[RMDB]
RNA sequence: GGGAACGACUCGAGUAGAGUCGAAAAUUAGGGGCAUUGAAUGAGAUUGUGUGUGCAAAGCAUGUAACUAAUACUGAUUUGUGGUGAACAUUCAGUUAUGUUAACUGUCACCAUUAUCAUCAUCAUCAGUUUAAGGCUUUGUCCUGGGCCUGUGGAAAAAAUUUAGUACCUUCGGGUACUAAAUUUUAAAAGAAACAACAACAACAAC
Reactivity to 2A3 in 0.01 (KOAc 150mM, MgCl2 10mM, bicine 150mM(pH8.5), 24C), signal-to-noise 3, nucleotides 027 to 156: u110u070a070g000g000g040g000c050a040u060u140g070a110a120u090g020a070g020a040u140u080g000u000g010u000g010u020g050c060a040a040a030g040c030a050u100g020u080a030a020c000u010a040a100u050a120c030u000g010a040u040u070u080g030u010g010g060u150g040a100a040c010a060u060u120c000a030g000u040u040a140u240g090u060u130a040a040c020u020g050u050c010a000c030c010a000u030u080a070u050c070a020u000c010a000u010c010a010u000c020a040g020u020u050u150a080a020g020g000c000u070u060u090g020u030c000c010u020g000g010g020c020c030u040g020u100g040g000a020a120
Reactivity to DMS in 0.01 (KOAc 150mM, MgCl2 10mM, bicine 150mM(pH8.5), 24C), signal-to-noise 3, nucleotides 027 to 156: u010u010a090g010g030g040g020c040a090u010u010g030a090a130u000g000a190g000a130u010u010g020u000g030u000g020u000g040c070a030a070a070g030c020a040u000g020u000a020a040c030u000a070a070u000a130c040u010g020a030u010u010u010g040u010g020g020u000g000a080a090c060a130u000u010c010a070g010u000u000a080u000g020u000u000a060a070c050u010g010u010c010a010c020c020a060u000u000a040u000c090a060u000c030a040u000c300a040u000c020a050g020u000u000u010a100a070g010g010c030u000u000u000g010u000c040c040u010g010g020g010c010c030u000g030u000g020g000a000a000
This 207-nucleotide RNA was probed chemically with 2A3 and DMS. The DMS profile rests on 7,746 reads. DMS (dimethyl sulfate) methylates the pairing face of unpaired adenines and cytosines. For 2A3, 1,556 sequencing reads were counted. DMS adducts were read by reverse transcription with MarathonRT.